This 177-nucleotide RNA was probed chemically with DMS and 2A3. The 2A3 profile rests on 1,778 reads. The reactions ran in a buffer of 150 mM KOAc, 10 mM MgCl2 and 150 mM bicine (pH 8.5), at 24 C. Values are in units of 0.01, from 0 to 300, in steps of 10. It was measured as part of the RMDB library M2PK90.

RNA sequence: GGGAACGACUCGAGUAGAGUCGAAAAGUAAAGGCGGAGGAGGGUUUUGGCUUGCGCUCGGUCCGCCCGCGCGUGGUGUGGGCUGGAAUUCGUGUGUGGAGGAUGAUUAAUGCCGCGCGGCCAGGAAAGACAGGAUAUUGUUCGCAAUAUCCUGUCUAAAAGAAACAACAACAACAAC
Reactivity to DMS in 0.01 (KOAc 150mM, MgCl2 10mM, bicine 150mM(pH8.5), 24C), signal-to-noise 3, nucleotides 027 to 126: g000u020a070a080a130g010g010c090g010g020a110g010g000a090g000g000g020u000u000u000u010g000g000c050u000u000g040c030g020c040u000c020g010g010u000c020c030g000c030c000c020g030c050g010c100g010u000g030g010u000g030u000g000g010g000c010u010g010g000a040a080u000u020c060g020u010g010u000g000u020g020g000a110g000g000a080u000g010a110u000u010a050a100u010g010c040c060g010c030g000c040g000g000c010c030a060g000g010a050a080
Reactivity to 2A3 in 0.01 (KOAc 150mM, MgCl2 10mM, bicine 150mM(pH8.5), 24C), signal-to-noise 2, nucleotides 027 to 126: g040u060a010a140a070g050g030c030g010g060a040g000g050a070g010g060g000u060u040u070u050g050g010c040u080u230g040c010g010c030u040c030g030g010u010c000c020g000c000c040c000g000c020g030c020g100u160g090g150u090g000u020g030g040g010c060u090g050g030a010a060u100u080c020g000u060g010u010g050u100g070g050a050g040g030a020u050g020a020u150u200a170a060u190g020c000c000g000c000g010c020g030g000c010c010a000g030g060a090a120